[RMDB]
RNA sequence: GGGAACGACUCGAGUAGAGUCGAAAAGAUAUGGAUAGUGCCAGGCAAGUGCUUAGACCGUUUGACGACGUUCGGAAACGAACGUCCGAGGUCUAAGCACUUGAACUACCUGACACUAUCCUAAGUCCAAGACAUUAGGCUUCGGCCUAAUGUCUUGAAAAGAAACAACAACAACAAC
Reactivity to DMS in 0.01 (KOAc 150mM, MgCl2 10mM, bicine 150mM(pH8.5), 24C), signal-to-noise 2, nucleotides 027 to 126: g000a120u010a300u000g000g010a020u000a000g000u010g010c000c030a000g000g000c000a030a010g020u000g010c000u000u000a000g020a010c000c020g030u020u010u020g020a120c300g010a010c000g000u010u000c000g040g010a120a130a270c000g010a030a000c000g000u000c010c010g010a030g020g040u000c000u010a000a000g010c000a000c000u010u020g010a060a070c090u010a300c010c000u020g020a040c020a020c000u000a000u020c020c010u000a000a060g020u000c040